[RMDB]
RNA sequence: GGGAACGACUCGAGUAGAGUCGAAAAUGUACCAACAACUCGUGCACCUGCCGCUUUGGCAUCAUCAGGUAUUAUUUCAGGAUUUGGAUUAGCCAUUGCAAAUAUAAUUGGAUUAUCUGCCAUACUCAGUCAUGGCGUAUUUCGAUACGCCAUGACUAAAAGAAACAACAACAACAAC
Reactivity to DMS in 0.01 (KOAc 150mM, MgCl2 10mM, bicine 150mM(pH8.5), 24C), signal-to-noise 1, nucleotides 027 to 126: u000g030u000a190c030c040a010a100c120a120a040c080u000c130g020u010g000c080a110c010c050u000g010c070c040g040c080u000u000u030g020g010c060a050u010c100a050u010c050a070g010g020u000a030u000u000a100u000u020u010c060a070g050g000a080u000u010u010g000g020a030u000u000a080g020c030c010a040u000u000g010c050a030a020a040u000a040u000a030a160u030u000g010g000a070u000u000a060u000c100u040g020c000c050a030u010a060c100u010c100
Reactivity to 2A3 in 0.01 (KOAc 150mM, MgCl2 10mM, bicine 150mM(pH8.5), 24C), signal-to-noise 1, nucleotides 027 to 126: u070g000u000a030c010c010a050a060c060a010a030c020u030c080g070u030g000c000a050c070c010u030g150c060c020g040c130u140u070u110g050g020c000a000u050c000a020u030c010a050g130g000u040a040u170u030a030u030u290u100c110a030g130g000a090u100u060u180g060g000a040u050u170a020g030c010c020a040u030u060g100c050a010a150a000u130a010u030a030a160u070u050g010g000a000u000u050a040u110c020u110g020c000c000a040u030a100c050u100c140